[RMDB]
RNA sequence: GGGAACGACUCGAGUAGAGUCGAAAAGGGGUCCACAUCGAUCUCAAAGAGAGCGAGGAUCUAUACUGAAGCCUCCACGGUAUAGGGAGCUCCUUUGAGGGAGUGGACGGAGGCACCCAAACUUUAUUGGUGACGGUUCGCCGUCACCAAUAAAGAAGUACACAUCCGGAUUCGUCCGGAUGUGUACAAAAGAAACAACAACAACAAC
Reactivity to 2A3 in 0.01 (KOAc 150mM, MgCl2 10mM, bicine 150mM(pH8.5), 24C), signal-to-noise 2, nucleotides 027 to 156: g140g000g000g050u080c050c010a020c020a060u300c020g000a000u000c000u000c020a000a000a020g300a000g000a030g000c040g000a300g030g000a000u000c000u000a000u010a020c000u020g040a180a000g000c000c000u000c010c000a010c050g000g010u000a000u000a000g000g000g000a000g000c000u020c000c000u010u000u000g000a000g000g000g000a000g000u010g000g000a000c010g000g000a000g000g000c000a040c010c000c000a050a090a140c000u000u000u000a000u000u000g010g000u000g000a000c000g010g060u070u130c280g040c080c000g000u000c000a000c000c000a000a000u000a000a000a000g000a010a020
Record summary:
The data come from the RNA Mapping Database (RMDB), library RNAMAK. The record gives the reactivity of an RNA of 207 nucleotides to 2A3. For 2A3, 2,298 sequencing reads were counted. Conditions: 150 mM KOAc, 10 mM MgCl2 and 150 mM bicine (pH 8.5), 24 C.